[RMDB]
RNA sequence: GGGAACGACUCGAGUAGAGUCGAAAAGAACACGCUGGAGGCGCCGAUGUUGCUGUACUCGCCGAUGUCGGCGUCGCCGACGUAGGUCAGGUGCGGCACCUUGGUGCCGGUGCCGAUGGUGGAGUUCUCAUCUCAUUUGAUUCGUCAAAUGAGAUGAAAAAGAAACAACAACAACAAC
Reactivity to DMS in 0.01 (KOAc 150mM, MgCl2 10mM, bicine 150mM(pH8.5), 24C), signal-to-noise 9, nucleotides 027 to 126: g000a040a040c010a060c010g010c010u000g000g010a300g000g000c000g030c000c010g010a080u000g010u000u000g010c010u000g010u000a020c040u000c300g010c030c000g010a060u010g010u000c000g010g000c000g020u000c180g010c000c000g000a010c000g010u000a110g010g010u000c140a060g010g010u000g010c000g000g000c000a010c050c080u000u010g020g020u000g020c090c020g010g010u000g010c010c010g000a290u010g000g010u000g010g000a160g010u000u000c020
Reactivity to 2A3 in 0.01 (KOAc 150mM, MgCl2 10mM, bicine 150mM(pH8.5), 24C), signal-to-noise 5, nucleotides 027 to 126: g010a000a000c010a010c020g010c020u040g020g030a030g010g030c010g010c010c000g020a050u110g030u130u050g010c020u010g020u030a020c030u040c120g000c030c010g030a050u060g000u010c010g000g030c060g230u100c090g010c010c000g000a000c000g020u030a020g010g010u050c060a040g000g040u010g010c000g000g000c000a000c000c000u070u180g150g070u180g040c010c010g010g000u000g000c000c000g010a020u040g010g030u030g020g040a140g020u030u010c020
This 177-nucleotide RNA was probed chemically with DMS and 2A3. For DMS, 30,644 sequencing reads were counted. The 2A3 profile rests on 21,059 reads. The reactions ran in a buffer of 150 mM KOAc, 10 mM MgCl2 and 150 mM bicine (pH 8.5), at 24 C. For DMS the reverse transcriptase was MarathonRT.